[RMDB]
Structure probing data (2A3) for a 177-nucleotide construct. For 2A3 the reverse transcriptase was SuperScript II with manganese. It was measured as part of the RMDB library OK1LIB. The reactions ran in a buffer of 150 mM KOAc, 10 mM MgCl2 and 150 mM bicine (pH 8.5), at 24 C. Reactivities are given for positions 27 through 126. The 2A3 profile rests on 489 reads.

RNA sequence: GGGAACGACUCGAGUAGAGUCGAAAAACUUCUUGAAAUCCACACAGAACUUGCUCAAACUGUCUGUGACAGUGUUCAGCAAGACAUGAUUGUCUUCACUAUAAAUGAGCCAGAUCUAAAGCCAAAACUUCCUCUCCAGCUUCGGCUGGAGAGGAAGAAAAGAAACAACAACAACAAC
Reactivity to 2A3 in 0.01 (KOAc 150mM, MgCl2 10mM, bicine 150mM(pH8.5), 24C), signal-to-noise 2, nucleotides 027 to 126: a010c090u100u130c030u030u050g100a300a000a000u000c000c000a090c000a000c000a060g040a060a000c010u000u000g010c000u000c000a120a130a000c020u000g000u010c000u150g300u180g050a000c040a000g000u030g190u300u050c040a170g000c000a000a010g000a000c020a010u270g110a180u080u180g000u000c000u000u000c030a030c100u000a010u140a130a070a240u180g000a000g030c010c000a000g030a040u030c020u150a000a000a150g000c060c130a000a040a040a160